[RMDB]
RNA sequence: GGGAACGACUCGAGUAGAGUCGAAAAGAUAUGGAUCAGGUAGUGAGUCCGAAGAACUCGGAAACGAGGGAGGACCCUACUGAUCCUAAGUCAAACCGGACAGCGUUCUUCGGAACGCUGUCCGGAACAUCUUAAUCAACUUCGGUUGAUUAAGAUGAAAAGAAACAACAACAACAAC
Reactivity to DMS in 0.01 (KOAc 150mM, MgCl2 10mM, bicine 150mM(pH8.5), 24C), signal-to-noise 2, nucleotides 027 to 126: g000a060u000a300u000g000g010a000u000c010a010g010g010u000a010g020u010g000a160g050u000c000c010g000a080a200g000a120a210c000u000c010g000g010a130a080a150c000g010a000g000g000g000a070g010g000a000c000c000c010u000a010c000u000g000a010u000c000c000u000a010a030g000u000c030a070a170a230c020c010g000g000a040c000a010g000c000g000u000u000c000u000u010c230g010g010a020a000c010g000c020u000g010u000c000c030g020g000a010a080
Reactivity to 2A3 in 0.01 (KOAc 150mM, MgCl2 10mM, bicine 150mM(pH8.5), 24C), signal-to-noise 2, nucleotides 027 to 126: g030a020u070a040u140g000g000a000u010c030a050g170g180u080a020g050u060g300a140g050u000c020c020g070a160a030g000a040a020c000u000c000g000g050a120a100a030c000g010a020g010g040g010a030g000g010a000c000c000c000u000a010c000u000g000a000u000c000c000u010a080a000g030u000c050a050a050a110c010c000g010g010a010c010a000g000c000g060u010u000c000u100u170c300g100g000a010a000c000g030c020u020g020u000c000c000g010g000a010a010